[RMDB]
RNA sequence: GGGAACGACUCGAGUAGAGUCGAAAAUAACCCCUAUACUUGUAUAGGCGAUUAAUAAAUCUUCUGUAAAUGCUGUAAGAGGAUUACCCCUUGUGGUUUCAGCACUAGGCUGCUCUAGCGAUUAAUCACAACGAUUUGGUCUUCGGACCAAAUCGAACCAAGUAUCAAACUUCGGUUUGAUACUUGGAAAAGAAACAACAACAACAAC
Reactivity to 2A3 in 0.01 (KOAc 150mM, MgCl2 10mM, bicine 150mM(pH8.5), 24C), signal-to-noise 2, nucleotides 027 to 156: u020a020a040c000c000c000c010u000a010u030a090c050u070u210g040u040a040u020a030g020g000c020g080a100u050u150a100a060u110a150a090a020u000c010u030u010c020u040g180u160a090a160a130u160g030c030u040g100u120a040a000g010a010g010g010a010u010u040a030c010c020c010c000u050u060g000u060g040g000u000u010u080c010a010g000c000a010c060u030a010g120g040c070u070g040c020u160c030u220a040g000c010g070a070u010u170a050a020u040c020a010c010a130a100c030g000a000u000u000u000g000g000u000c000u000u050c220g050g000a000c000c000a000a000a000u000c000g000a000a010

Structure probing data (2A3) for a 207-nucleotide construct. For 2A3 the reverse transcriptase was SuperScript II with manganese. Values are in units of 0.01, from 0 to 300, in steps of 10. Conditions: 150 mM KOAc, 10 mM MgCl2 and 150 mM bicine (pH 8.5), 24 C. Source: RMDB library M2RFPK, as collected in RNAgym.